[RMDB]
RNA sequence: GGGAACGACUCGAGUAGAGUCGAAAAACUUAACAACAGUUUCUAGUCCACAGCAGCAAUCAUUGUUGGAAAAUGAUGAUGAUCUGAUUCAACUUGGUUUUAUGGAGUUUAGGCCUGAGGAGUUAAAAGAGGUUUUGGCUCAAGUAUUACAAGAAAACCCUAAUAUCCGUUUCGACGGAUAUUAGGGAAAAGAAACAACAACAACAAC
Reactivity to DMS in 0.01 (KOAc 150mM, MgCl2 10mM, bicine 150mM(pH8.5), 24C), signal-to-noise 2, nucleotides 027 to 156: a070c060u020u010a090a120c070a100a100c060a150g000u000u000u000c040u000a190g000u020c010c080a080c120a060g060c030a060g000c170a070a040u020c030a040u000u020g030u010u010g050g010a060a110a090a030u000g030a030u000g010a030u000g000a120u020c030u010g000a150u000u000c050a080a110c030u000u060g000g000u000u010u010u000a060u010g010g000a100g030u000u000u000a070g010g010c040c010u000g010a080g070g000a110g000u000u000a040a030a050a100g000a090g010g010u000u000u000u000g020g030c030u000c020a070a090g000u000a050u000u010a070c050a000a110g010a070a100a090a190
Reactivity to 2A3 in 0.01 (KOAc 150mM, MgCl2 10mM, bicine 150mM(pH8.5), 24C), signal-to-noise 3, nucleotides 027 to 156: a000c060u130u050a090a030c070a020a000c010a070g010u010u020u030c040u080a040g070u000c010c030a040c030a050g050c000a000g000c000a010a100u050c010a060u040u050g020u030u040g100g020a110a100a040a040u120g010a010u010g010a020u030g030a040u040c010u020g060a080u070u080c060a060a010c030u040u070g060g020u090u050u000u060a070u110g060g000a020g020u030u030u040a030g020g030c010c010u040g010a040g080g030a040g060u110u170a060a050a030a030g090a080g050g010u020u090u070u080g010g000c000u020c030a000a030g010u030a040u200u090a040c010a000a040g180a060a110a070a020